[RMDB]
RNA sequence: GGGAACGACUCGAGUAGAGUCGAAAAUCCAGCCGCGCGCGCGCCCCAGGCCCCGGCCCGGGCCUCGGUUCCAGAAGGGAGAGGAGCCCGCCAAGGCGCGCAAGAGAGCGGGCUGCCUCGCAGUCCGCAAGAUGUGUAUCUUCGGAUACACAUCUUGAAAAGAAACAACAACAACAAC
Reactivity to 2A3 in 0.01 (KOAc 150mM, MgCl2 10mM, bicine 150mM(pH8.5), 24C), signal-to-noise 7, nucleotides 027 to 126: u030c000c000a020g080c040c030g080c010g020c010g010c000g000c000g010c030c000c000c010a020g010g000c010c000c030c060g150g000c010c060c020g020g010g000c010c000u010c020g040g020u060u030c010c000a100g060a300a180g160g020g010a070g010a040g040g030a030g030c010c030c010g020c020c020a030a010g010g000c000g000c000g000c000a020a020g080a010g010a010g020c000g000g000g000c000u020g060c000c040u070c090g000c010a010g020u010c000c000g000
Reactivity to DMS in 0.01 (KOAc 150mM, MgCl2 10mM, bicine 150mM(pH8.5), 24C), signal-to-noise 7, nucleotides 027 to 126: u020c020c010a170g010c080c070g020c080g020c230g010c010g010c020g010c030c000c040c060a080g000g020c010c030c110c160g020g000c060c070c070g000g010g000c000c000u010c050g000g000u010u000c020c020a170g030a150a150g000g010g000a100g000a150g010g010a130g000c010c000c030g000c070c080a200a150g010g000c020g020c000g010c010a070a080g000a110g000a140g000c000g000g010g000c000u000g000c000c090u020c170g010c030a020g010u000c000c010g020
Chemical mapping of a 177-nucleotide RNA with 2A3 and DMS. The reactions ran in a buffer of 150 mM KOAc, 10 mM MgCl2 and 150 mM bicine (pH 8.5), at 24 C. Source: RMDB libraries RFM100 and RFMREP, as collected in RNAgym. DMS adducts were read by reverse transcription with MarathonRT.